[RMDB]
RNA sequence: GGGAACGACUCGAGUAGAGUCGAAAAAGAAAGAUGUAUCUCCAGCUGUUGAUAAGAGGGGGAAGCCUUUCUCUUCCACCUCGCCAAAAUUUUCAAAACUCCUGAUACAAUUGGUCAUGAUUCUUUCUGACUCUUAUCUAUUCGUAGAUAAGAGUCAAAAAGAAACAACAACAACAAC
Reactivity to DMS in 0.01 (KOAc 150mM, MgCl2 10mM, bicine 150mM(pH8.5), 24C), signal-to-noise 4, nucleotides 027 to 126: a080g020a050a040a050g020a170u010g010u020a060u000c040u000c030c090a070g020c040u010g000u000u010g000a100u020a070a040g030a010g000g000g000g010g010a030a040g010c260c050u010u000u000c070u010c010u000u010c000c030a040c010c000u010c010g000c050c040a040a020a110a130u010u000u000u010c040a020a050a070a090c160u000c120c100u000g000a040u000a020c080a060a190u000u000g000g020u000c110a070u010g010a110u000u000c000u000u000u000c020
Reactivity to 2A3 in 0.01 (KOAc 150mM, MgCl2 10mM, bicine 150mM(pH8.5), 24C), signal-to-noise 4, nucleotides 027 to 126: a000g150a050a030a010g050a040u130g050u110a070u010c030u020c060c010a010g020c090u100g000u160u040g070a110u100a180a020g010a030g020g010g000g010g020a000a000g000c010c030u080u170u030c060u010c000u010u000c000c000a010c000c010u020c020g020c000c010a050a090a060a060u090u110u040u100c040a070a080a060a150c030u060c030c050u040g020a040u010a100c040a050a150u070u070g050g000u090c070a070u110g090a110u040u000c000u010u000u000c000